[RMDB]
This 207-nucleotide RNA was probed chemically with 2A3. It was measured as part of the RMDB library RNAMAK. For 2A3, 421 sequencing reads were counted. Conditions: 150 mM KOAc, 10 mM MgCl2 and 150 mM bicine (pH 8.5), 24 C.
RNA sequence: GGGAACGACUCGAGUAGAGUCGAAAAAAGGUUUCGACCUUGAGAUAUCCUAAGUCUCUCCCAAUGACGGCUUAUGGAGCUCAUAUUCGGAAACGAAUAGAGCGAUGAAAUAAGCUAAGACAGGGAGAGAUAUGGAACCGGACCAAUUCGUUGGUAAGGCUCUUCUGUAUUUCGAUACAGAAGAGCCAAAAGAAACAACAACAACAAC
Reactivity to 2A3 in 0.01 (KOAc 150mM, MgCl2 10mM, bicine 150mM(pH8.5), 24C), signal-to-noise 1, nucleotides 027 to 156: a020a000g120g020u030u010u140c150g000a050c000c030u010u030g020a130g010a090u270a110u200c000c000u000a090a020g010u040c000u000c020u000c000c020c000a050a030u070g120a000c160g000g020c000u000u000a000u000g000g000a000g000c000u000c000a270u000a000u100u000c000g070g110a130a000a080c000g010a000a000u000a000g000a030g010c000g300a300u040g000a000a040a000u000a030a030g000c010u080a030a130g020a090c190a030g000g000g000a000g000a000g000a000u000a000u000g000g000a000a210c150c090g100g050a000c110c030a030a070u160u120c190g130u120u110g000g030u110a180a120